[RMDB]
RNA sequence: GGGAACGACUCGAGUAGAGUCGAAAAUCCUCGUCUUGUUUAAAGGCUUGUGAUAUGCUGUGGUAGUUGGGUUGCAGAAGUGCGAUAUUAAAGUAAAAGCCAUGAGUCUUUUAGGCCCAGUGUGUAAAUAAACCCUCACUUUCGAGUGAGGGUUUAUAAAAGAAACAACAACAACAAC
Reactivity to DMS in 0.01 (KOAc 150mM, MgCl2 10mM, bicine 150mM(pH8.5), 24C), signal-to-noise 2, nucleotides 027 to 126: u010c000c020u020c170g000u010c080u000u000g010u020u020u050a090a060a080g000g040c000u010u000g000u010g020a120u010a030u020g010c030u010g000u010g000g010u020a080g010u010u010g000g000g030u000u000g010c030a020g000a090a070g000u000g010c020g000a040u010a060u030u020a100a060a160g030u010a030a050a090a080g000c030c020a090u010g000a080g010u010c000u000u000u010u000a080g010g000c010c010c020a110g010u010g000u000g000u020a010a110